[RMDB]
RNA sequence: GGGAACGACUCGAGUAGAGUCGAAAAUUUGGACACUCUAAGAACUAUUGCGCCCAGGAUCCUAUUUGUGGUAAAUGUAGUGGUCCCCAUAUGACCGGGUCCGCUUUGUGCAUAAGUGACGUAUGUCUCACCGAUAUGUGUUCGCACAUAUCGGUGAAAAAGAAACAACAACAACAAC
Reactivity to 2A3 in 0.01 (KOAc 150mM, MgCl2 10mM, bicine 150mM(pH8.5), 24C), signal-to-noise 2, nucleotides 027 to 126: u080u020u100g070g000a000c030a010c020u040c020u060a030a080g040a150a020c050u020a080u170u140g030c030g020c010c060c000a040g070g040a040u050c020c010u110a080u190u140u150g090u060g010g050u080a100a060a100u160g000u080a070g020u030g100g010u040c000c000c010c000a060u110a110u290g110a050c020c100g050g030g000u040c020c010g000c060u020u050u060g070u010g000c020a030u010a130a050g020u000g050a000c030g130u140a010u210g030u000c010
Reactivity to DMS in 0.01 (KOAc 150mM, MgCl2 10mM, bicine 150mM(pH8.5), 24C), signal-to-noise 2, nucleotides 027 to 126: u020u000u010g000g050a070c050a070c040u010c050u010a110a100g020a170a160c090u000a080u000u010g010c090g020c010c170c070a060g000g000a030u000c020c040u010a110u010u000u000g030u000g000g010u010a040a140a090u010g010u000a050g020u000g000g000u000c020c030c020c060a090u000a080u000g000a090c170c160g020g010g000u000c020c050g010c050u030u010u010g020u000g000c010a040u000a050a060g010u000g000a040c120g010u000a060u000g000u000c030